RNA sequence: GGGAACGACUCGAGUAGAGUCGAAAAGAGGGUCGCCCAGGAAUGGCGGGACCCACUCGACUGGGGUCCGCGUUCCAUCCUUUCUUACCUUGUGGCCGGCAUGGUCCCAGCCUCCUCGCUGGCGCCGCAGUAUUGAAUAGUUCGCUAUUCAAUACUGAAAAGAAACAACAACAACAAC
Reactivity to DMS in 0.01 (KOAc 150mM, MgCl2 10mM, bicine 150mM(pH8.5), 24C), signal-to-noise 8, nucleotides 027 to 126: g010a070g000g010g010u000c130g010c020c020c050a140g000g000a020a010u000g020g050c010g010g010g000a030c000c000c000a010c040u000c270g000a110c160u000g020g000g000g010u000c010c010g020c010g010u000u000c000c010a100u000c040c020u000u000u000c040u000u000a150c100c060u010u010g010u010g000g000c030c030g010g000c060a090u000g010g010u000c120c010c030a090g010c030c040u000c050c030u000c090g000c030u000g000g010c110g010c050c080g000
Reactivity to 2A3 in 0.01 (KOAc 150mM, MgCl2 10mM, bicine 150mM(pH8.5), 24C), signal-to-noise 7, nucleotides 027 to 126: g070a030g020g030g010u150c080g050c020c010c030a020g030g060a030a040u090g300g090c040g020g010g020a020c000c070c010a030c030u190c080g190a200c130u060g000g000g010g030u020c010c010g010c000g000u010u000c010c000a030u030c010c000u100u240u050c030u060u060a100c020c030u070u080g070u120g110g020c050c010g020g020c050a080u130g050g000u060c040c000c000a010g020c000c020u070c010c000u050c040g010c030u020g020g000c030g020c020c010g030